[RMDB]
RNA sequence: GGGAACGACUCGAGUAGAGUCGAAAAAAGACGGAGAUCAUCAAUCGCCAUACCUAUUUUGACUUCUUUGGCGUGUGCCGCAACGUUGGUAAGCAGAAGUGAGGUGCAAAGGGUGAGUAGAAUGUUCCAUUCAACGGCGAUUCGUCGCCGUUGAAUGAAAAGAAACAACAACAACAAC
Reactivity to DMS in 0.01 (KOAc 150mM, MgCl2 10mM, bicine 150mM(pH8.5), 24C), signal-to-noise 2, nucleotides 027 to 126: a070a130g000a100c130g000g000a070g000a040u000c060a060u010c120a070a060u000c000g000c010c030a080u000a060c050c030u010a100u000u000u010u020g000a120c080u000u000c040u000u000u020g020g010c000g010u000g000u010g000c000c060g000c080a050a050c090g030u010u000g020g000u010a060a060g000c070a060g020a020a040g000u010g010a030g010g020u000g010c110a050a070a080g020g010g010u000g000a060g000u000a110g000a060a040u000g010u000u000c020
Reactivity to 2A3 in 0.01 (KOAc 150mM, MgCl2 10mM, bicine 150mM(pH8.5), 24C), signal-to-noise 1, nucleotides 027 to 126: a010a000g030a020c030g080g000a060g000a070u020c010a010u060c020a050a140u020c010g020c020c010a020u060a150c010c020u010a150u090u190u080u100g100a070c030u000u020c000u080u130u080g040g040c030g080u080g050u090g020c000c020g000c040a100a040c100g090u120u000g090g020u030a030a060g000c020a010g010a050a040g110u080g030a000g050g000u080g050c030a050a060a000g050g020g000u010g010a040g020u000a010g070a070a060u110g040u090u060c070